[RMDB]
RNA sequence: GGGAACGACUCGAGUAGAGUCGAAAAGAUAUGGAUGCGAAGGCUGAGCGAAGAACUCACUCGGAAACGAGUGAGGGAGCCAGUGUUGACGCAUCCUAAGUCAAAGGCUCGUGUUCGCACGAGCCAACUUACUCUGCAUCUUCGGAUGCAGAGUAAGAAAAGAAACAACAACAACAAC
Reactivity to 2A3 in 0.01 (KOAc 150mM, MgCl2 10mM, bicine 150mM(pH8.5), 24C), signal-to-noise 2, nucleotides 027 to 126: g030a010u070a030u150g000g000a010u010g000c030g010a080a030g160g010c000u030g050a080g150c070g190a300a030g000a000a000c010u000c000a000c000u000c010g060g000a030a040a020c020g010a000g010u030g000a000g000g000g000a010g000c000c020a010g030u050g260u210u140g110a070c030g020c010a000u000c000c000u000a080a020g040u030c080a080a080a150g020g000c000u000c010g010u030g090u050u150c300g030c110a000c000g000a000g000c010c000a000a020
Reactivity to DMS in 0.01 (KOAc 150mM, MgCl2 10mM, bicine 150mM(pH8.5), 24C), signal-to-noise 2, nucleotides 027 to 126: g000a030u000a300u010g010g010a010u000g010c000g010a300a100g010g010c000u000g020a140g020c020g000a080a120g000a080a190c000u000c010a000c000u000c000g030g010a040a070a250c010g010a020g080u000g000a010g010g000g010a100g000c060c030a020g000u000g010u010u020g010a240c030g000c010a020u000c020c020u000a010a040g000u000c040a140a090a120g000g010c000u000c020g020u010g000u000u010c230g010c010a010c060g000a030g010c050c000a020a080